[RMDB]
Conditions: 150 mM KOAc, 10 mM MgCl2 and 150 mM bicine (pH 8.5), 24 C. An RNA of 177 nucleotides, treated with 2A3 and DMS and read out base by base. For 2A3, 2,241 sequencing reads were counted. For DMS the reverse transcriptase was MarathonRT.
RNA sequence: GGGAACGACUCGAGUAGAGUCGAAAACACAUGACGGAGGUUGUGAGGCGCUGCCCCCACCAUGAGCGCUGCUCAGAUAGCGAUGGUGAGCAGCUGGGGCUGGAGAGACGACAGGGCUGGUUGCCCAAGCUGUGAUUCUUUUCGAAGAAUCACAGCUAAAAGAAACAACAACAACAAC
Reactivity to 2A3 in 0.01 (KOAc 150mM, MgCl2 10mM, bicine 150mM(pH8.5), 24C), signal-to-noise 2, nucleotides 027 to 126: c090a010c030a070u130g020a090c030g060g020a030g030g010u100u090g070u100g060a040g010g010c030g000c020u010g000c010c020c000c000c000a050c020c020a050u100g070a050g080c060g000c010u020g010c010u020c040a070g090a220u180a040g020c060g040a020u020g040g130u070g020a010g000c020a000g000c020u020g000g050g020g000c000u000g010g020a040g030a010g000a040c020g030a050c030a050g000g030g000c000u050g050g000u030u090g010c000c000c020a010
Reactivity to DMS in 0.01 (KOAc 150mM, MgCl2 10mM, bicine 150mM(pH8.5), 24C), signal-to-noise 3, nucleotides 027 to 126: c050a090c120a040u020g000a070c080g000g020a080g020g010u000u020g000u040g010a120g000g010c060g030c020u010g030c060c010c040c020c030a070c060c030a060u010g000a170g010c110g000c030u010g010c050u000c070a030g010a170u000a110g000c180g030a050u000g000g010u000g000a060g000c000a040g030c000u010g000g000g000g000c080u010g000g000a090g000a070g010a080c040g000a120c130a060g000g000g010c020u010g000g010u020u030g000c020c000c010a080